[RMDB]
RNA sequence: GGGAACGACUCGAGUAGAGUCGAAAACUUACAAAUCAGACAACAAUAAAUGCAAUGCAAGGUUUCUAUCUUUGUCUGGAUGUUAUAAUUGUGAACCGGGGGCUAAACUGGAGAUAGAACAUGUGACGAAUAGUAUCGUGUUCGCACGAUACUAUUCAAAAGAAACAACAACAACAAC
Reactivity to DMS in 0.01 (KOAc 150mM, MgCl2 10mM, bicine 150mM(pH8.5), 24C), signal-to-noise 4, nucleotides 027 to 126: c080u000u030a050c080a020a090a120u020c010a020g010a010c040a060a070c210a070a090u010a050a080a080u010g000c090a090a090u010g010c100a080a100g010g030u000u010u000c020u000a010u000c010u000u000u000g010u000c020u000g010g000a090u000g000u010u000a070u000a060a090u010u010g020u010g010a080a130c030c030g010g010g000g020g010c240u010a020a050a060c130u000g000g010a040g000a040u000a050g010a030a040c070a060u000g020u000g020a110c230
Reactivity to 2A3 in 0.01 (KOAc 150mM, MgCl2 10mM, bicine 150mM(pH8.5), 24C), signal-to-noise 3, nucleotides 027 to 126: c000u050u090a040c030a030a160a080u110c010a000g030a020c020a070a000c030a060a090u090a160a110a050u150g030c070a050a080u100g020c030a070a050g160g010u020u110u000c010u020a060u000c010u030u050u040g020u010c000u020g030g030a020u020g030u040u090a130u030a140a210u180u120g030u040g090a040a030c050c000g000g030g000g030g000c060u140a130a060a000c030u060g050g000a020g010a020u020a020g020a010a020c030a040u120g040u080g040a050c060
An RNA of 177 nucleotides, treated with DMS and 2A3 and read out base by base. The RNA was probed in 150 mM KOAc, 10 mM MgCl2 and 150 mM bicine (pH 8.5) at 24 C. Reactivities are given for positions 27 through 126. DMS adducts were read by reverse transcription with MarathonRT. High 2A3 reactivity points to a flexible backbone, as in loops and unpaired stretches.